[RMDB]
RNA sequence: GGGAACGACUCGAGUAGAGUCGAAAAUUGGUGGCGACCCGAAAGGAUCGCCCUCUACAAUCAGAUUGCCGUAGACUGCGGAGCCCAGUUUUCAGCGGGGAAGCACCUCGAGUCGAAGACUUGGGGGCGACUACGUCCACUUCGGUGGACGUAGUCGAAAAGAAACAACAACAACAAC
Reactivity to DMS in 0.01 (KOAc 150mM, MgCl2 10mM, bicine 150mM(pH8.5), 24C), signal-to-noise 3, nucleotides 027 to 126: u060u010g000g000u000g040g000c000g000a000c040c020c010g000a150a110a110g020g010a050u000c020g010c000c020c010u030c020u030a120c180a100a140u030c090a110g000a130u030u030g000c020c000g000u000a040g010a190c090u010g010c100g010g010a090g010c090c010c010a080g000u040u000u000u000c060a070g000c000g000g000g000g020a130a150g020c210a110c000c000u020c010g000a030g030u010c030g010a070a140g000a000c010u010u030g010g000g000g000g010
Reactivity to 2A3 in 0.01 (KOAc 150mM, MgCl2 10mM, bicine 150mM(pH8.5), 24C), signal-to-noise 5, nucleotides 027 to 126: u090u070g060g000u070g000g000c010g010a000c010c010c010g060a110a050a060g010g000a060u020c000g000c000c010c000u030c000u030a040c020a060a060u060c030a040g100a250u110u170g080c020c000g020u060a060g110a220c080u080g030c050g010g030a040g030c020c000c000a020g010u000u000u040u080c040a030g020c030g000g020g000g010a050a050g070c060a110c050c000u000c010g010a040g130u050c040g080a070a020g000a000c080u130u120g000g000g000g030g000